This 177-nucleotide RNA was probed chemically with 2A3 and DMS.
For 2A3 the reverse transcriptase was SuperScript II with manganese.
Source: RMDB library TTRDES, as collected in RNAgym.
[RMDB]
RNA sequence: GGGAACGACUCGAGUAGAGUCGAAAAGAUAUGGAUGUACUAAGGACGAUAAGAUACAAUCGGAAACGAUUGAAUAUCUUUUGACGUCUAUGUACAUCCUAAGUCAAAACAGCUCUUCGGAGCUGAAGAGUGAAAAGCAGUUCGCUGCUUUUCACUCAAAAGAAACAACAACAACAAC
Reactivity to 2A3 in 0.01 (KOAc 150mM, MgCl2 10mM, bicine 150mM(pH8.5), 24C), signal-to-noise 2, nucleotides 027 to 126: g000a000u030a010u160g000g000a000u020g000u020a020c020u080a200a300g130g000a010c050g150a220u070a300a030g000a000u010a050c010a000a000u000c010g000g010a060a000a010c010g000a020u030u000g020a070a090u030a000u000c020u000u080u040u220g300a190c130g000u020c000u000a050u060g000u010a000c000a000u000c000c000u000a000a000g020u000c010a010a010a090a230c010a000g010c030u040c000u080u160c280g240g000a010g010c020u030g000a040a040
Reactivity to DMS in 0.01 (KOAc 150mM, MgCl2 10mM, bicine 150mM(pH8.5), 24C), signal-to-noise 1, nucleotides 027 to 126: g060a020u000a300u030g000g010a000u000g000u000a010c040u000a180a230g010g000a000c010g020a160u000a030a000g010a010u020a130c040a000a000u000c010g030g000a200a080a100c000g020a000u010u040g000a140a200u000a000u000c000u020u000u000u010g030a220c080g030u010c000u010a220u000g000u000a040c000a000u000c000c000u000a000a070g020u000c050a060a100a050a170c000a000g010c020u010c010u000u010c200g030g010a010g000c000u000g000a010a090
The reactions ran in a buffer of 150 mM KOAc, 10 mM MgCl2 and 150 mM bicine (pH 8.5), at 24 C. DMS (dimethyl sulfate) methylates the pairing face of unpaired adenines and cytosines.